Chemical mapping of a 177-nucleotide RNA with DMS and 2A3. The data come from the RNA Mapping Database (RMDB), library RFMREP. DMS adducts were read by reverse transcription with MarathonRT. The RNA was probed in 150 mM KOAc, 10 mM MgCl2 and 150 mM bicine (pH 8.5) at 24 C. The DMS profile rests on 6,925 reads. For 2A3, 8,106 sequencing reads were counted.

RNA sequence: GGGAACGACUCGAGUAGAGUCGAAAAUUGUGGAUUGCUUGUGUGCUGGCAGGCUACUACUGGUAAGAAUGGCUAGUGUCAGCAGGGAUGGCUCCUCUCUGGGUUCCAUCUCACCAAGAUGAGUGGUCAUGUAUUGUUUGUUCGCAAACAAUACAUGAAAAGAAACAACAACAACAAC
Reactivity to DMS in 0.01 (KOAc 150mM, MgCl2 10mM, bicine 150mM(pH8.5), 24C), signal-to-noise 5, nucleotides 027 to 126: u000u000g020u000g010g010a090u000u000g010c030u000u000g020u010g040u000g010c010u000g020g010c020a040g000g000c010u000a050c090u010a110c060u000g020g000u010a090a060g010a110a160u000g000g000c020u000a110g010u000g020u010c020a020g010c030a070g010g010g010a040u000g010g000c070u000c020c010u010c200u020c200u010g010g000g010u000u010c010c000a020u000c000u000c000a150c130c060a060a080g000a100u000g000a070g030u000g000g000u000
Reactivity to 2A3 in 0.01 (KOAc 150mM, MgCl2 10mM, bicine 150mM(pH8.5), 24C), signal-to-noise 5, nucleotides 027 to 126: u060u070g020u050g060g050a100u060u110g030c010u060u030g040u010g020u050g090c000u000g020g000c010a020g000g020c000u010a020c020u030a040c030u050g130g090u180a090a030g040a120a070u070g020g010c030u060a100g300u030g020u060c000a000g000c010a010g010g010g010a010u020g020g000c010u000c000c010u010c030u000c060u100g030g000g000u040u000c000c000a010u010c000u010c010a040c020c020a080a030g070a160u140g030a020g070u100g040g020u020